Source: RMDB library OK3TST, as collected in RNAgym.
An RNA of 207 nucleotides, treated with 2A3 and read out base by base.
For 2A3 the reverse transcriptase was SuperScript II with manganese.

[RMDB]
RNA sequence: GGGAACGACUCGAGUAGAGUCGAAAACUGUGACGUGCAAGUAAAAGGAGUGUCCUCUUACUUCAGUUUCUGGUGACCCAGAACUAGACCUUGGGCAGUAGUUCUCAACCUGUGAGUCACAGAGGUUGGCACGAAAACAGACGAGAGCACAAAGUUACCGUACGAACGAAUUCGUUCGUUCGUACGGAAAAGAAACAACAACAACAAC
Reactivity to 2A3 in 0.01 (KOAc 150mM, MgCl2 10mM, bicine 150mM(pH8.5), 24C), signal-to-noise 1, nucleotides 027 to 156: c010u020g030u050g060a000c000g040u030g070c020a060a070g000u020a000a020a060a060g030g020a100g200u150g210u140c030c030u000c010u000u070a070c020u030u090c020a040g020u000u090u030c020u040g100g110u100g120a150c000c000c000a000g000a020a010c030u040a030g080a070c000c000u130u110g000g030g030c030a090g070u140a030g030u100u000c040u000c020a040a080c050c020u020g030u020g120a000g070u110c050a000c000a040g020a020g030g010u040u000g010g000c000a030c000g000a070a050a050a000c000a030g040a040c000g070a000g020a040g080c090a010c050a070a140a000g020u080u080a090